The data come from the RNA Mapping Database (RMDB), library OK3TST. Structure probing data (DMS and 2A3) for a 207-nucleotide construct. Values cover nucleotides 27 to 156.
RNA sequence: GGGAACGACUCGAGUAGAGUCGAAAAGCAAGUGUGUAGAAGGUAAACUUUAUUUAACAUAUUUAGGCUGCAUGCUUAUUUAAAGCAGUCGUUCAUAACCUGAGGUUAAUCUGGGGGACACUGUUUGGUAAACUGUUCUUUCUCAGAAGUAGAAAUGCUACUAGAGCGUAUUCGUACGCUCUAGUAGAAAAGAAACAACAACAACAAC
Reactivity to DMS in 0.01 (KOAc 150mM, MgCl2 10mM, bicine 150mM(pH8.5), 24C), signal-to-noise 2, nucleotides 027 to 156: g010c040a070a040g020u000g040u000g000u000a150g010a130a060g000g000u000a060a110a070c010u000u010u020a070u020u000u000a050a070c050a110u000a080u010u000u000a230g010g000c000u000g020c090a080u000g020c050u020u000a040u000u000u020a040a080a150g030c010a060g000u010c010g010u010u010c040a090u010a150a070c050c010u000g010a070g030g030u000u000a060a100u000c050u010g060g000g050g020g000a140c060a020c050u000g010u000u000u000g030g010u010a120a030a050c040u000g000u010u000c050u000u000u000c020u000c050a080g000a070a120g010u010a060g000a020a080a070u000g040
Reactivity to 2A3 in 0.01 (KOAc 150mM, MgCl2 10mM, bicine 150mM(pH8.5), 24C), signal-to-noise 3, nucleotides 027 to 156: g070c030a090a000g030u050g010u020g020u140a010g020a070a020g050g020u110a160a100a020c020u070u160u150a150u080u160u130a150a000c050a060u190a190u110u070u050a050g010g010c010u020g000c020a020u060g000c000u100u090a120u150u220u120a100a110a000g000c000a010g020u010c050g000u040u040c020a080u010a160a090c030c000u020g070a040g010g090u070u080a060a030u040c020u050g010g000g010g000g010a000c000a000c050u050g040u050u020u050g010g010u030a080a020a000c010u000g050u050u030c010u020u070u000c010u000c010a100g050a200a010g060u070a040g070a060a040a140u300g030
For 2A3 the reverse transcriptase was SuperScript II with manganese.
For 2A3, 1,285 sequencing reads were counted.